The record gives the reactivity of an RNA of 177 nucleotides to 2A3. It was measured as part of the RMDB library M2PK50. Values are in units of 0.01, from 0 to 300, in steps of 10.
[RMDB]
RNA sequence: GGGAACGACUCGAGUAGAGUCGAAAACCAAGGUAGUUCGCUACCUUGGAAAGAAAGCUCGAGCGAAGGGAACGGAAAGGACGCUCGAGCAACCCACCCAAAAAAGAGCAUGCUUCGGCAUGCUCAACUACGUUAUGCACUUCGGUGCAUAACGUAGAAAAGAAACAACAACAACAAC
Reactivity to 2A3 in 0.01 (KOAc 150mM, MgCl2 10mM, bicine 150mM(pH8.5), 24C), signal-to-noise 1, nucleotides 027 to 126: c000c000a000a000g030g000u000a000g010u020u050c220g000c110u000a000c000c010u010u000g010g000a060a010a000g040a030a100a000g000c010u000c000g010a010g000c030g040a100a090g100g020g050a150a070c050g020g150a150a050a140g080g010a020c000g010c000u000c000g000a000g000c000a000a000c010c000c020a050c000c020c010a020a230a020a060a030a040g010a000g020c010a010u020g020c040u080u060c250g090g000c000a000u000g010c000u030c000a010a000